[RMDB]
RNA sequence: GGGAACGACUCGAGUAGAGUCGAAAAGAUCUAGGAGAUGGUAGACUAAUCACAAUGCUGAGUUACAAGUCCUCAGGACAAGAUGCUGAUUCAGAACAGGGCAACCAGUUUUUCAGCAGGAGAGAAGAACCAGAAGAGCAUUCGUGCUCUUCUGGUUAAAAGAAACAACAACAACAAC
Reactivity to DMS in 0.01 (KOAc 150mM, MgCl2 10mM, bicine 150mM(pH8.5), 24C), signal-to-noise 4, nucleotides 027 to 126: g030a070u020c030u010a060g000g000a100g020a030u020g010g000u000a050g010a060c070u000a060a090u000c050a020c180a130a130u000g000c030u020g000a040g010u020u000a100c140a110a130g010u000c060c000u030c090a080g000g000a060c030a070a090g010a140u020g000c040u000g000a050u030u030c180a120g000a030a040c050a100g010g000g010c230a060a070c060c060a080g010u000u000u010u000u010c000a020g000c000a040g010g010a090g000a030g000a060a060g030
Reactivity to 2A3 in 0.01 (KOAc 150mM, MgCl2 10mM, bicine 150mM(pH8.5), 24C), signal-to-noise 4, nucleotides 027 to 126: g040a040u050c020u080a020g020g110a090g020a100u050g060g030u030a020g040a070c060u060a090a010u040c030a030c080a070a020u050g010c000u010g030a010g060u100u090a060c020a100a100g040u020c010c010u090c100a080g010g030a020c020a010a090g040a070u080g060c040u060g010a070u090u150c100a060g060a030a030c020a070g000g050g010c030a030a050c030c020a040g000u000u010u000u050u050c010a030g020c030a000g030g030a060g030a000g000a140a010g040